[RMDB]
RNA sequence: GGGAACGACUCGAGUAGAGUCGAAAAUGUGCGUGUCAAGGCUGUGGUUAUGACCAGAGAUGACUCCAGCGGGGGAUGGUUCCCACAGGAAGGAGGCGGGAUCAGUCGCGUCGGGGUCUGUAAGGUCAUGCACCCCGAAGGCAAUGGACGAAGCGGAAGUGCCUUUUAAUUUCGAUUAAAAGGCACUAAAAGAAACAACAACAACAAC
Reactivity to DMS in 0.01 (KOAc 150mM, MgCl2 10mM, bicine 150mM(pH8.5), 24C), signal-to-noise 2, nucleotides 027 to 156: u000g010u010g020c090g020u000g020u000c070a130a160g040g010c030u010g030u020g010g020u000u000a060u010g030a050c010c020a140g020a300g020a160u000g020a030c020u000c020c000a090g020c010g020g000g040g010g000a100u000g020g000u000u000c020c000c030a100c080a160g010g010a110a100g000g010a100g040g020c110g000g020g000a050u000c040a060g000u000c000g010c020g000u010c040g040g000g030g010u000c000u000g010u010a110a130g030g010u010c040a050u000g000c040a090c010c060c020c000g000a020a080g020g010c060a060a110u010g010g000a100c060g000a110a070g010c060g010g000a170
Reactivity to 2A3 in 0.01 (KOAc 150mM, MgCl2 10mM, bicine 150mM(pH8.5), 24C), signal-to-noise 4, nucleotides 027 to 156: u170g020u040g020c030g010u060g030u060c040a060a080g060g020c050u050g060u100g090g000u070u080a020u050g020a010c010c000a010g030a030g030a210u150g010a020c020u000c020c000a020g030c010g020g060g010g010g010a070u050g010g010u030u040c000c030c020a020c020a020g100g050a060a100g060g050a030g030g070c040g000g000g010a000u040c010a010g130u010c020g000c000g180u070c060g010g000g010g000u010c000u000g070u080a140a080g030g000u010c000a000u020g000c010a040c010c030c000c000g040a040a010g030g000c020a040a040u100g030g010a020c020g030a100a030g010c040g020g050a040